[RMDB]
RNA sequence: GGGAACGACUCGAGUAGAGUCGAAAAGAAAACCGCUAACAUCGCGUAGAUGCAAAAAUAAAAUGGGAGACCACCCCUAGUGGAAAAAUAAAAAUGGCGAAGAUGGCCUAAACAUCAAAUAAAGAAAGGGAUACAUAUACUUCGGUAUAUGUAUCCCAAAAGAAACAACAACAACAAC
Reactivity to 2A3 in 0.01 (KOAc 150mM, MgCl2 10mM, bicine 150mM(pH8.5), 24C), signal-to-noise 2, nucleotides 027 to 126: g090a050a120a050a000c080c000g020c070u120a200a000c000a000u030c020g060c130g240u190a010g000a060u000g020c020a000a000a000a100a000u300a140a140a000a100u120g000g000g000a130g170a060c000c000a000c000c000c000c050u060a030g000u110g000g060a080a000a220a000a000u300a040a000a000a000a030u120g000g000c030g040a020a140g000a020u070g020g000c000c050u090a090a000a000c000a000u040c060a000a080a210u180a080a280a000g240a070a040a000
Reactivity to DMS in 0.01 (KOAc 150mM, MgCl2 10mM, bicine 150mM(pH8.5), 24C), signal-to-noise 1, nucleotides 027 to 126: g000a140a020a170a130c080c000g000c010u030a080a300c010a000u000c040g000c220g000u010a110g000a060u000g010c000a000a020a060a070a130u030a070a070a040a140u010g000g000g000a070g000a190c010c000a060c050c000c000c120u000a010g040u060g010g030a020a060a000a030a130u080a010a010a010a050a050u000g010g000c120g000a140a120g000a060u000g000g000c040c030u000a030a000a040c100a030u030c060a010a070a070u140a030a040a030g000a110a040a070